The record gives the reactivity of an RNA of 207 nucleotides to 2A3. The data come from the RNA Mapping Database (RMDB), library RNAMAK. The RNA was probed in 150 mM KOAc, 10 mM MgCl2 and 150 mM bicine (pH 8.5) at 24 C. For 2A3, 1,829 sequencing reads were counted.
RNA sequence: GGGAACGACUCGAGUAGAGUCGAAAAGGGGUCGUUGCAACAGCGUCCCUGGGAAGAUCAUCGAUCUACACUGAAGCCUCCACGGUGUAGGGAGAUCUUCGGGACGACAUGCAACGACGGAGGCACCCAAAUCAAAGCGACUUCGGUCGCUUUGAAAGCUAGGAGUGUACUUCGGUACACUCCUAGCAAAAGAAACAACAACAACAAC
Reactivity to 2A3 in 0.01 (KOAc 150mM, MgCl2 10mM, bicine 150mM(pH8.5), 24C), signal-to-noise 2, nucleotides 027 to 156: g060g020g070g000u000c040g000u000u010g000c060a160a170c050a300g210c030g000u020c000c010c030u050g220g140g010a020a000g020a020u010c020a020u300c010g010a000u030c000u000a000c010a000c000u010g010a070a000g030c000c010u030c020c000a010c040g010g010u000g000u010a010g010g000g000a010g000a000u000c010u000u000c020g010g000g000a000c000g020a090c010a030u120g020c000a000a000c000g000a010c010g000g000a010g000g000c010a050c000c000c000a050a160a000u020c010a010a000a000g000c000g020a000c010u070u060c190g090g030u000c000g000c020u010u000u000g000a000a000a010